[RMDB]
RNA sequence: GGGAACGACUCGAGUAGAGUCGAAAAAGUAAGCGCGUCUUUGGUAUGCGUCACUUCGACGUUCAGUUACUCGGCGGUAUGGUUCUUAACGAACGCUGCAUCGCCGAAAUGCGUACCGGUGAAGGAACGAUCGGAGAAUAUUCGUAUUCUCCGAUCGAAAAGAAACAACAACAACAAC
Reactivity to 2A3 in 0.01 (KOAc 150mM, MgCl2 10mM, bicine 150mM(pH8.5), 24C), signal-to-noise 4, nucleotides 027 to 126: a000g150u110a070a030g010c010g030c020g060u010c060u140u190u220g120g010u190a020u050g000c000g010u020c020a030c030u070u070c050g070a020c010g020u040u100c030a070g020u050u030a030c030u030c000g000g000c000g000g000u040a050u070g040g000u000u000c010u070u140a120a060c130g000a020a000c050g030c200u100g010c020a020u030c010g000c020c010g000a010a020a010u090g010c010g000u010a020c000c030g030g080u070g040a050a040g040g040a070a030
Reactivity to DMS in 0.01 (KOAc 150mM, MgCl2 10mM, bicine 150mM(pH8.5), 24C), signal-to-noise 4, nucleotides 027 to 126: a050g020u000a080a140g030c020g020c020g010u000c030u010u000u000g020g030u000a030u000g010c030g010u000c120a090c080u000u010c070g010a130c090g010u000u000c140a100g000u010u010a100c180u000c010g020g010c010g010g000u000a060u000g010g010u000u000c000u000u020a100a120c240g000a000a020c030g010c090u000g010c120a030u000c000g020c000c000g010a010a040a070u000g010c010g020u000a070c110c000g000g020u000g010a070a060g000g010a110a200